[RMDB]
RNA sequence: GGGAACGACUCGAGUAGAGUCGAAAAGCGUAAGGCGGCCACAGCAGAAGCGUUCACGUCGAAGCCGCUGUCAGAUUCUGGUGAAUCUGCGAUUUCUGCUGACAUGAAGGCUGAAGAGACAGCCAAAGAUGACUAUCCAGUUCGCUGGAUAGUCAUCAAAAGAAACAACAACAACAAC
Reactivity to 2A3 in 0.01 (KOAc 150mM, MgCl2 10mM, bicine 150mM(pH8.5), 24C), signal-to-noise 7, nucleotides 027 to 126: g060c050g070u130a050a060g040g000c010g000g000c000c050a120c000a030g000c010a000g000a050a000g010c020g050u120u120c070a060c110g110u090c080g140a040a010g000c000c000g000c000u010g030u020c000a000g010a040u030u010c020u270g250g010u300g080a010a000u000c020u020g000c020g040a020u000u050u010c000u000g000c010u010g020a030c020a100u170g090a110a060g010g000c000u020g000a110a010g040a040g010a060c010a000g000c000c000a020a030a000
Reactivity to DMS in 0.01 (KOAc 150mM, MgCl2 10mM, bicine 150mM(pH8.5), 24C), signal-to-noise 3, nucleotides 027 to 126: g000c050g030u030a080a060g020g010c000g000g000c060c170a140c080a010g000c050a020g050a030a060g030c020g000u010u020c080a130c170g020u010c040g020a030a150g020c010c030g010c000u000g000u040c000a000g010a030u000u000c010u040g030g030u100g000a010a030u000c000u000g000c050g000a130u030u010u000c000u000g000c020u000g010a260c220a130u030g010a170a110g000g000c010u000g000a090a070g010a300g000a070c030a030g030c000c040a110a100a110